Structure probing data (2A3 and DMS) for a 207-nucleotide construct. Values cover nucleotides 27 to 156. Conditions: 150 mM KOAc, 10 mM MgCl2 and 150 mM bicine (pH 8.5), 24 C. For DMS, 3,077 sequencing reads were counted. 2A3 adducts were read by reverse transcription with SuperScript II with manganese.

RNA sequence: GGGAACGACUCGAGUAGAGUCGAAAAAACUCAGCUAGGGAGAGUAUAACAUUCAUGUUGACGAGACGUAGACGAAACACAGAGGAAAAUUAUUAAUCACUGGAUAGUAUUAGUAAUGACUCUGUGUAAAACUCUUCUACGUUCGCGUAGAAGAGAACACGGUUACAAAGUUCGCUUUGUAACCGUGAAAAGAAACAACAACAACAAC
Reactivity to 2A3 in 0.01 (KOAc 150mM, MgCl2 10mM, bicine 150mM(pH8.5), 24C), signal-to-noise 3, nucleotides 027 to 156: a000a000c040u030c020a020g010c060u090a050g000g040g020a010g000a010g010u070a060u040a180a050c050a040u050u060c030a050u110g000u030u050g010a020c030g010a010g010a020c020g010u030a040g020a070c110g070a060a040a010c000a000c000a010g010a000g050g040a140a070a110a000u000u010a000u000u010a000a010u010c030a000c020u040g080g050a140u300a300g000u020a010u010u000a000g000u000a000a000u020g010a010c000u000c000u000g000u000g000u000a000a000a000a020c000u000c000u000u000c000u000a000c000g000u010u030c100g010c010g060u000a000g000a000a000g010a010g000a020a000
Reactivity to DMS in 0.01 (KOAc 150mM, MgCl2 10mM, bicine 150mM(pH8.5), 24C), signal-to-noise 1, nucleotides 027 to 156: a110a020c010u020c010a090g000c040u000a080g000g040g020a060g000a080g030u010a040u010a050a100c030a100u000u010c030a110u000g060u010u000g000a100c020g010a080g000a070c020g000u000a070g010a110c060g020a120a170a030c010a000c010a030g020a030g000g000a090a070a060a030u000u010a010u000u000a000a020u010c110a060c020u000g020g020a150u010a120g030u000a060u000u010a020g010u000a010a020u000g000a150c000u000c000u010g000u000g000u000a000a020a030a100c000u000c000u010u000c010u010a000c000g050u030u000c280g040c040g050u000a010g010a020a010g010a000g020a030a050